An RNA of 177 nucleotides, treated with 2A3 and DMS and read out base by base.
[RMDB]
RNA sequence: GGGAACGACUCGAGUAGAGUCGAAAAAGGCUGUGGCGGGAGUGUAGAGCACCAUGUAUUCGCAGCGUUCAAUUGGGUUCUGCCUGGCUGCUGGUAAGACUUCCCAUCCAGUGAGGCACAACUGCUGCGCCUCUCCUAAGUUCGCUUAGGAGAGGCGAAAAGAAACAACAACAACAAC
Reactivity to 2A3 in 0.01 (KOAc 150mM, MgCl2 10mM, bicine 150mM(pH8.5), 24C), signal-to-noise 3, nucleotides 027 to 126: a000g070g040c050u040g030u040g080g010c030g030g020g020a160g080u110g010u090a070g020a000g040c040a150c030c020a030u130g020u090a190u040u110c010g000c050a000g000c000g060u060u070c050a150a150u060u080g040g030g000u110u000c030u030g030c000c010u000g090g010c000u010g000c010u010g000g050u090a060a040g030a060c040u110u020c030c000c000a020u020c000c000a000g050u070g220a060g040g020c030a010c000a100a050c050u090g040c010u040g000
Reactivity to DMS in 0.01 (KOAc 150mM, MgCl2 10mM, bicine 150mM(pH8.5), 24C), signal-to-noise 1, nucleotides 027 to 126: a010g000g000c050u020g000u020g000g000c000g000g000g000a160g020u000g000u010a060g000a120g000c010a050c000c000a030u010g000u010a080u000u010c020g000c000a030g030c100g000u000u000c050a080a170u070u000g000g000g000u010u000c110u020g030c050c060u000g000g010c010u000g030c050u030g000g050u030a050a050g040a120c130u020u000c000c010c010a130u050c080c050a000g000u010g020a050g000g020c010a150c130a020a160c030u000g030c000u010g000
Notes: Source: RMDB library OK1LIB, as collected in RNAgym. DMS adducts were read by reverse transcription with MarathonRT. Reactivities are given for positions 27 through 126.